[RMDB]
Chemical mapping of a 177-nucleotide RNA with DMS and 2A3.

RNA sequence: GGGAACGACUCGAGUAGAGUCGAAAAGGUCGCAUCUUCGGAUGCGACCAAAGAACCUCAAAGUGACGCAAACUUCCGCGUCAGAAGGAGGAAACGAGGAAAAAAGUGCACCCUUCGGGGUGCACAACAACAUAAUUGACUUCGGUCAAUUAUGUUGAAAAGAAACAACAACAACAAC
Reactivity to DMS in 0.01 (KOAc 150mM, MgCl2 10mM, bicine 150mM(pH8.5), 24C), signal-to-noise 6, nucleotides 027 to 126: g010g010u000c010g030c000a000u000c000u010u010c200g020g010a020u000g010c000g010a010c000c000a000a030a060g020a100a150c000c000u000c020a070a070a150g010u000g000a010c000g000c020a100a090a140c240u000u010c170c150g000c000g010u000c010a020g010a100a140g000g000a030g010g010a050a060a090c100g010a110g000g000a010a060a080a090a110a090g010u000g000c010a010c000c000c010u000u010c190g020g010g010g010u000g010c000a000c000a020a060
Reactivity to 2A3 in 0.01 (KOAc 150mM, MgCl2 10mM, bicine 150mM(pH8.5), 24C), signal-to-noise 3, nucleotides 027 to 126: g000g000u000c000g020c000a000u010c010u050u080c170g040g000a000u000g010c010g010a000c000c000a000a000a000g000a010a040c000c010u020c010a110a090a020g140u010g010a000c000g000c010a070a150a250c110u290u070c160c100g000c000g000u000c000a000g000a030a000g110g030a000g000g020a060a080a030c080g040a140g080g060a070a080a010a030a040a030g000u000g000c000a010c010c000c000u000u050c190g070g000g000g000u010g000c000a000c010a000a010
It was measured as part of the RMDB library M2PK50. For DMS the reverse transcriptase was MarathonRT. Values cover nucleotides 27 to 126. The DMS profile rests on 7,361 reads. For 2A3, 6,272 sequencing reads were counted.